[RMDB]
RNA sequence: GGGAACGACUCGAGUAGAGUCGAAAAAAAGGCCUCUCUGGGAACGACUUGAGUGCAAACUCAUGGUAGGACCUGAGAGGAGCCGAUGUUCCGUCGUACGUUUUGAAAAACGAGCCAGGGAGUGUGCCAACUAGGAUCAGUUCGCUGAUCCUAGUUGAAAAGAAACAACAACAACAAC
Reactivity to DMS in 0.01 (KOAc 150mM, MgCl2 10mM, bicine 150mM(pH8.5), 24C), signal-to-noise 9, nucleotides 027 to 126: a050a050a110g010g000c000c000u000c000u000c000u010g000g000g000a050a200c010g000a060c100u000u000g010a010g010u000g000c300a080a100a020c000u000c000a010u010g010g000u020a080g000g000a300c000c000u000g000a010g010a010g010g000a030g020c010c010g010a170u010g010u000u000c000c000g010u020c100g010u020a070c060g000u000u000u010u010g010a060a060a040a060a040c040g000a130g000c030c040a070g010g000g000a110g010u000g000u000g010c090
Reactivity to 2A3 in 0.01 (KOAc 150mM, MgCl2 10mM, bicine 150mM(pH8.5), 24C), signal-to-noise 3, nucleotides 027 to 126: a000a000a000g020g010c010c000u000c010u000c020u060g020g000g020a160a060c010g010a020c010u030u020g000a000g010u030g040c050a080a060a090c000u000c000a020u060g010g060u120a050g000g040a080c000c000u020g020a020g010a000g010g010a000g040c000c010g010a060u080g030u030u000c030c000g060u020c030g030u080a100c010g000u010u000u040u110g170a110a070a010a010a010c010g000a000g020c010c030a050g010g060g000a100g060u110g010u090g080c010